[RMDB]
Source: RMDB library TTRDEL, as collected in RNAgym. The record gives the reactivity of an RNA of 177 nucleotides to 2A3 and DMS. The DMS profile rests on 1,195 reads. Reactivities are rounded to 0.1 and cut off at 0 and 3. The RNA was probed in 150 mM KOAc, 10 mM MgCl2 and 150 mM bicine (pH 8.5) at 24 C. Values cover nucleotides 27 to 126.
RNA sequence: GGGAACGACUCGAGUAGAGUCGAAAAGAUAUGGAGGGAGCACGUAACCCAAUGAUGGCUCUCGGAAACGAGAGCUUGAGGGUGAAGUGCGAAGAACUCCUAAGUCAAAGUACCCUUCGGGGUACAAGCUCAGAAGUAUGUUCGCAUACUUCUGAGCAAAAGAAACAACAACAACAAC
Reactivity to 2A3 in 0.01 (KOAc 150mM, MgCl2 10mM, bicine 150mM(pH8.5), 24C), signal-to-noise 1, nucleotides 027 to 126: g040a040u150a040u210g000g000a020g000g070g010a170g000c050a000c040g040u120a010a030c050c080c020a120a300u150g050a030u050g000g000c000u000c000u000c030g020g000a040a050a060c010g010a010g000a000g000c000u000u030g020a030g010g010g010u020g040a160a060g000u000g000c010g000a000a030g020a010a020c020u000c000c000u040a240a030g010u060c030a120a000a090g000u000a000c000c000c000u000u040c300g050g000g050g000u000a010c020a010a030
Reactivity to DMS in 0.01 (KOAc 150mM, MgCl2 10mM, bicine 150mM(pH8.5), 24C), signal-to-noise 2, nucleotides 027 to 126: g000a070u000a300u000g000g010a010g010g030g000a070g000c000a010c000g000u040a300a070c010c000c000a130a210u040g030a130u010g010g000c000u000c000u000c000g030g000a120a110a150c010g000a000g010a030g040c000u000u000g010a020g000g010g010u000g030a160a300g010u000g010c010g000a080a060g000a180a080c010u010c010c000u000a010a030g000u000c030a120a140a120g000u000a000c010c000c020u000u030c230g050g000g000g020u000a010c030a030a040